[RMDB]
This 177-nucleotide RNA was probed chemically with DMS and 2A3. The 2A3 profile rests on 12,924 reads. DMS adducts were read by reverse transcription with MarathonRT. The data come from the RNA Mapping Database (RMDB), library OK1LIB. 2A3 adducts were read by reverse transcription with SuperScript II with manganese.
RNA sequence: GGGAACGACUCGAGUAGAGUCGAAAAAGAAGUUGACAAUAACAUAUUCAUCCUCAAUGAUGUGGGAAAUCAACGGUCCUGAGUCAGUGCUUGUUAACACUUAUCAAUGGAUCAUCAGGAAUUGGGAGGUAUUACUAGGAUUCGUCCUAGUAAUACCAAAAGAAACAACAACAACAAC
Reactivity to DMS in 0.01 (KOAc 150mM, MgCl2 10mM, bicine 150mM(pH8.5), 24C), signal-to-noise 7, nucleotides 027 to 126: a060g020a070a130g010u010u000g000a030c080a070a090u030a230a180c050a020u000a020u040u000c010a020u000c150c150u080c300a070a040u000g000a020u000g000u000g010g000g000a120a150a090u010c010a010a010c050g010g010u000c010c010u010g010a160g020u010c110a030g010u010g000c070u000u020g000u020u010a050a110c070a040c020u010u020a090u010c070a050a080u010g000g000a050u010c080a050u010c090a050g030g000a040a040u010u000g010g000g010a170
Reactivity to 2A3 in 0.01 (KOAc 150mM, MgCl2 10mM, bicine 150mM(pH8.5), 24C), signal-to-noise 9, nucleotides 027 to 126: a000g160a050a010g010u010u020g040a030c110a150a060u110a120a000c030a020u090a120u100u160c010a030u080c010c110u170c060a040a110u080g010a010u050g010u050g030g030g040a030a060a080u030c010a000a040c030g020g040u010c010c000u020g010a010g070u040c060a010g010u010g030c050u130u170g060u170u150a090a020c010a020c020u040u060a060u120c060a090a080u090g070g020a030u040c030a040u070c040a030g110g080a110a110u120u090g090g040g020a090